[RMDB]
RNA sequence: GGGAACGACUCGAGUAGAGUCGAAAAACGUGCGCUACGGCGCACGAAGUAAAAAUAAGAUUUUGCCGAAUAUAUUCAUAUAGAUGAAUCUGUUAUGAAACAGAAAAGCCGCUGUACGCAGCGGCAAUAAAUUUCGAAGAUUCGUCUUCGAAAUUUAAAAAGAAACAACAACAACAAC
Reactivity to 2A3 in 0.01 (KOAc 150mM, MgCl2 10mM, bicine 150mM(pH8.5), 24C), signal-to-noise 2, nucleotides 027 to 126: a000c030g030u000g050c000g000c010u020a030c240g140g000c000g050c010a000c000g000a030a000g000u030a000a060a080a060a060u200a120a130g050a150u010u120u030u110g010c010c010g050a100a000u140a040u050a100u280u080c060a010u180a030u140a150g080a190u090g060a100a070u000c010u010g010u000u060a110u300g140a110a050a000c010a010g040a020a090a010a000g000c000c000g000c050u000g000u050a010c200g000c070a010g000c010g000g000c000a000a000
Reactivity to DMS in 0.01 (KOAc 150mM, MgCl2 10mM, bicine 150mM(pH8.5), 24C), signal-to-noise 2, nucleotides 027 to 126: a100c010g060u000g000c000g080c020u020a150c230g000g080c020g070c010a010c040g040a030a060g000u010a010a020a070a100a110u060a110a090g000a300u000u000u010u000g030c000c020g010a140a150u040a090u010a100u020u000c000a040u000a140u030a080g000a050u000g010a050a030u000c070u000g020u010u010a070u020g010a090a030a020c040a050g000a170a050a090a110g000c030c020g000c030u000g040u020a090c180g000c000a020g020c010g000g000c000a000a000
The record gives the reactivity of an RNA of 177 nucleotides to 2A3 and DMS. Values cover nucleotides 27 to 126.